The record gives the reactivity of an RNA of 207 nucleotides to 2A3.
The reactions ran in a buffer of 150 mM KOAc, 10 mM MgCl2 and 150 mM bicine (pH 8.5), at 24 C.
The data come from the RNA Mapping Database (RMDB), library RNAMAK.
For 2A3 the reverse transcriptase was SuperScript II with manganese.
[RMDB]
RNA sequence: GGGAACGACUCGAGUAGAGUCGAAAAGGGGUCUACACGGAGAAGAGGCUGGGACAUGAGCUGAAGCCUCCACGGCUCAACAGCCCAGCUACCCACCUUCUUACGUGUAGACGGAGGCACCCAAACGUAUUCUGGGUCUUCGGACCCAGAAUACGAACACACCUACUCUGUUCGCAGAGUAGGUGUGAAAAGAAACAACAACAACAAC
Reactivity to 2A3 in 0.01 (KOAc 150mM, MgCl2 10mM, bicine 150mM(pH8.5), 24C), signal-to-noise 1, nucleotides 027 to 156: g000g010g010g020u000c000u000a000c000a000c000g000g000a000g000a000a000g010a000g020g020c000u000g000g000g010a100c080a200u200g000a040g000c000u030g020a110a000g030c000c010u000c010c000a000c010g000g000c010u000c010a070a130c050a070g010c020c000c000a000g000c000u010a000c060c030c050a110c000c010u000u020c000u020u130a240c000g010u000g010u010a000g000a000c010g000g000a000g000g030c000a010c020c000c000a010a080a040c010g000u010a000u000u000c000u010g010g000g000u010c000u030u060c300g160g010a000c010c000c000a020g000a000a000u000a000c000g000a000a000